Chemical mapping of a 177-nucleotide RNA with 2A3 and DMS.
RNA sequence: GGGAACGACUCGAGUAGAGUCGAAAAUAUACAUCGGAGUCGCGCCGGGGAACAUCGCCGCAACUUGGCGCACCGCUGGCGGAAGAUUCCAGCUGUGCGGCACGGAGAGUCCGCCGAUGUUAGCGGAAGCGCUAGUACUCUUCGGAGUACUAGCGCUAAAAGAAACAACAACAACAAC
Reactivity to 2A3 in 0.01 (KOAc 150mM, MgCl2 10mM, bicine 150mM(pH8.5), 24C), signal-to-noise 2, nucleotides 027 to 126: u140a010u060a000c020a030u090c040g010g000a000g020u020c000g000c020g050c030c010g000g010g020g110a070a110c070a290u070c030g060c040c000g000c040a030a030c050u000u050g200g000c000g050c000a000c000c000g000c000u000g000g020c010g040g050a150a090g060a110u070u050c010c010a000g030c010u000g000u000g000c000g000g000c010a000c050g020g000a140g000a000g300u000c040c000g000c020c000g020a040u020g010u030u050a110g040c010g000g020a090
Reactivity to DMS in 0.01 (KOAc 150mM, MgCl2 10mM, bicine 150mM(pH8.5), 24C), signal-to-noise 1, nucleotides 027 to 126: u050a130u000a060c020a070u010c000g000g000a060g000u020c050g070c010g040c300c000g030g000g000g000a250a180c270a150u040c030g010c140c010g000c000a040a010c090u000u000g050g000c060g000c050a000c000c100g000c000u040g010g040c100g000g000a190a020g000a160u000u020c000c000a000g060c040u000g020u010g040c040g030g000c020a040c030g000g050a150g010a220g030u000c000c010g000c000c000g000a040u030g020u000u000a150g020c010g000g010a100
For 2A3, 1,038 sequencing reads were counted.
2A3 adducts were read by reverse transcription with SuperScript II with manganese.